This 177-nucleotide RNA was probed chemically with 2A3. Reactivities are given for positions 27 through 126.
RNA sequence: GGGAACGACUCGAGUAGAGUCGAAAACAAAAACACAGACCGCUGCUAGUCCGUAAGGAUGUGUAUAGCGGCCGAAACCUGCCCAGUGUUGGUACCUGAAAGCUCUUUUCAAGGAGAAGAAGGGCCAAUCGGUGCGUGGUUUCGACCACGCACCGAUAAAAGAAACAACAACAACAAC
Reactivity to 2A3 in 0.01 (KOAc 150mM, MgCl2 10mM, bicine 150mM(pH8.5), 24C), signal-to-noise 1, nucleotides 027 to 126: c050a020a000a000a080a080c080a000c000a090g150a200c000c000g000c000u000g000c030u110a020g090u040c000c020g060u090a000a150g020g030a000u020g030u000g000u000a000u100a300g000c000g000g050c000c000g050a050a020a000c000c000u020g000c000c000c000a010g000u010g020u120u020g000g100u140a300c000c000u000g020a000a000a000g000c000u040c000u030u100u190u190c000a110a050g050g010a000g000a000a000g030a000a040g010g000g000c000c020a000

As a SHAPE reagent, 2A3 marks flexible, mostly unpaired nucleotides at the ribose 2'-OH. Reactivities are rounded to 0.1 and cut off at 0 and 3. The data come from the RNA Mapping Database (RMDB), library RFM100.